An RNA of 177 nucleotides, treated with DMS and 2A3 and read out base by base. For DMS, 4,385 sequencing reads were counted. The 2A3 profile rests on 4,614 reads. Conditions: 150 mM KOAc, 10 mM MgCl2 and 150 mM bicine (pH 8.5), 24 C. 2A3 adducts were read by reverse transcription with SuperScript II with manganese. Source: RMDB library OK1LIB, as collected in RNAgym. Reactivities are rounded to 0.1 and cut off at 0 and 3. DMS (dimethyl sulfate) methylates the pairing face of unpaired adenines and cytosines.

RNA sequence: GGGAACGACUCGAGUAGAGUCGAAAAGCCGAAGCAGCGGACGCAUUGCAAAAAGAGUUCGGACGUGUCCAGCCGUCUGAGGUUCUCCUGUCUGCUUCAGUGCUCCGUUCACUGCCUGAACUUGCCGUACCGGUCGUAAUUUCGAUUACGACCGGUAAAAAGAAACAACAACAACAAC
Reactivity to DMS in 0.01 (KOAc 150mM, MgCl2 10mM, bicine 150mM(pH8.5), 24C), signal-to-noise 2, nucleotides 027 to 126: g000c010c020g000a060a050g000c020a040g010c000g000g010a140c220g040c050a090u010u080g000c100a070a060a060a060a070g000a100g010u030u000c050g010g000a030c040g000u010g000u020c050c050a060g020c100c010g020u000c000u000g000a050g000g000u030u020c070u010c050c010u010g000u000c010u000g000c020u020u010c020a010g000u020g000c030u000c020c020g000u000u020c040a100c110u020g000c000c060u010g020a080a070c040u010u010g010c000c040g000
Reactivity to 2A3 in 0.01 (KOAc 150mM, MgCl2 10mM, bicine 150mM(pH8.5), 24C), signal-to-noise 5, nucleotides 027 to 126: g030c000c010g020a020a000g020c030a010g000c010g020g030a020c040g030c060a170u060u300g060c040a060a050a000a030a030g040a000g050u040u020c000g000g020a010c010g050u060g090u080c040c040a030g060c030c000g000u000c010u010g030a040g030g090u170u020c010u050c000c000u050g120u130c010u020g030c000u020u030c020a020g010u030g070c010u010c020c010g000u050u050c050a040c080u060g020c020c010u010g010a040a030c020u050u090g020c010c020g020